[RMDB]
RNA sequence: GGGAACGACUCGAGUAGAGUCGAAAACUUCCAGCGUUCGCGCUGGAAGAAAGGCCGAGUAGUGUAGGGUCGCGAAAGGCCAUAAAUCAACAAUCACUCAGAAAAUCGGUAUCUUCGGAUACCGAAACUACAUACCACACUUCGGUGUGGUAUGUAGAAAAGAAACAACAACAACAAC
Reactivity to 2A3 in 0.01 (KOAc 150mM, MgCl2 10mM, bicine 150mM(pH8.5), 24C), signal-to-noise 2, nucleotides 027 to 126: c000u010u010c000c010a000g000c010g060u060u080c170g030c020g000c100u000g020g010a000a010g000a000a000a000g000g000c030c000g000a000g000u000a010g000u010g060u070a240g030g130g190u120c020g000c020g020a020a000a010g000g000c020c000a000u000a000a030a000u050c030a020a120c020a030a090u130c070a030c110u110c040a020g120a070a130a010a080u030c000g000g010u000a000u000c000u010u040c190g130g000a000u000a000c020c000g000a000a010a000
Reactivity to DMS in 0.01 (KOAc 150mM, MgCl2 10mM, bicine 150mM(pH8.5), 24C), signal-to-noise 2, nucleotides 027 to 126: c000u000u000c000c000a000g000c000g050u000u040c220g010c010g040c000u000g000g000a000a000g000a020a100a110g010g030c000c000g000a110g000u020a100g000u030g030u010a150g010g000g000u030c010g010c010g000a110a080a220g000g000c010c000a030u010a000a050a070u020c170a110a060c150a100a050u000c120a040c090u010c030a160g010a060a080a130a070u000c000g010g020u000a000u000c000u000u000c170g010g000a020u000a000c010c000g000a000a010a090
This 177-nucleotide RNA was probed chemically with 2A3 and DMS. For 2A3 the reverse transcriptase was SuperScript II with manganese. It was measured as part of the RMDB library M2PK50. DMS adducts were read by reverse transcription with MarathonRT. The RNA was probed in 150 mM KOAc, 10 mM MgCl2 and 150 mM bicine (pH 8.5) at 24 C. The DMS profile rests on 1,180 reads.